[RMDB]
RNA sequence: GGGAACGACUCGAGUAGAGUCGAAAAGCACCCACGUGCCUUGGUCCAGCCCUGGUUUCCUCCAGUAUGACUGCAAAAUUUCCUCUCCAUCCGGGCCUCCGUAUCUGCAUUUCCGGUGCUGGGAUCAGUAUGGCUCCCACUUGGGUGGCUGAAUUCACCAUUAAUUUAGCUUCGGCUAAAUUAAUGGAAAAGAAACAACAACAACAAC
Reactivity to DMS in 0.01 (KOAc 150mM, MgCl2 10mM, bicine 150mM(pH8.5), 24C), signal-to-noise 1, nucleotides 027 to 156: g000c020a050c000c000c050a120c090g010u000g000c030c000u010u000g020g020u020c020c020a120g020c030c020c070u000g000g000u010u010u000c050c000u000c050c030a100g000u010a060u000g000a110c050u020g010c050a040a040a050a200u000u010u000c020c000u000c040u010c010c030a080u000c020c040g020g040g020c020c030u000c060c030g020u000a050u000c020u000g040c090a130u000u010u000c030c030g010g030u000g060c000u000g020g010g020a030u000c010a090g000u000a080u000g030g000c100u010c020c010c030a130c090u000u020g000g040g040u000g030g010c030u000g000a080a100u000u000c040a180
Reactivity to 2A3 in 0.01 (KOAc 150mM, MgCl2 10mM, bicine 150mM(pH8.5), 24C), signal-to-noise 3, nucleotides 027 to 156: g030c010a020c000c010c000a020c050g030u030g000c010c030u060u080g030g000u050c030c040a010g020c040c000c070u060g020g000u020u070u030c050c040u030c030c000a030g040u070a110u120g100a110c060u070g020c050a010a050a100a230u070u140u060c010c020u070c010u000c050c000a060u030c040c030g070g030g000c030c010u020c040c010g060u080a130u110c040u040g040c030a050u020u050u050c000c020g020g020u040g050c040u090g010g070g020a030u020c010a000g130u140a090u150g000g020c030u060c010c030c020a050c020u070u060g000g000g020u000g070g000c030u030g040a070a090u120u100c050a040
Chemical mapping of a 207-nucleotide RNA with DMS and 2A3. Source: RMDB library OK3TST, as collected in RNAgym. Conditions: 150 mM KOAc, 10 mM MgCl2 and 150 mM bicine (pH 8.5), 24 C. For 2A3, 2,233 sequencing reads were counted.